Chemical mapping of a 177-nucleotide RNA with 2A3 and DMS. The reactions ran in a buffer of 150 mM KOAc, 10 mM MgCl2 and 150 mM bicine (pH 8.5), at 24 C. Values cover nucleotides 27 to 126.
RNA sequence: GGGAACGACUCGAGUAGAGUCGAAAACGAGGUCGUACAAUAUGCUGUGCUCUACAUGAACCCACCCCACAGCGUGUACGACCAUGAGGUUGCCUGAGGGGUGGGUAAUAUAUUCAGGCAUACUCAAGGUUGACGGAGUAUUCGUACUUCGUCAACCAAAAGAAACAACAACAACAAC
Reactivity to 2A3 in 0.01 (KOAc 150mM, MgCl2 10mM, bicine 150mM(pH8.5), 24C), signal-to-noise 8, nucleotides 027 to 126: c060g030a080g000g010u000c010g010u030a000c030a030a040u110a100u300g000c000u000g010u010g020c020u060c060u160a220c110a140u300g140a060a050c000c000c000a000c000c000c000c000a010c000a000g000c030g020u020g000u010a010c000g010a010c010c000a010u050g000a000g000g020u030u020g000c000c000u010g010a020g000g020g010g000u010g000g000g000u010a010a000u050a000u010a020u010u060c010a000g000g010c010a010u080a090c000u010c020a040a040
Reactivity to DMS in 0.01 (KOAc 150mM, MgCl2 10mM, bicine 150mM(pH8.5), 24C), signal-to-noise 5, nucleotides 027 to 126: c070g010a090g000g000u000c000g010u000a000c010a030a140u040a100u050g020c010u000g020u020g000c240u020c200u040a090c300a140u020g000a090a100c000c000c000a020c000c000c000c000a050c030a000g010c010g010u000g010u010a000c000g010a000c000c000a010u030g010a000g000g000u000u000g000c000c000u000g000a020g010g010g000g010u010g000g000g010u000a010a000u010a120u040a080u010u000c000a010g000g010c000a020u000a180c000u000c000a110a130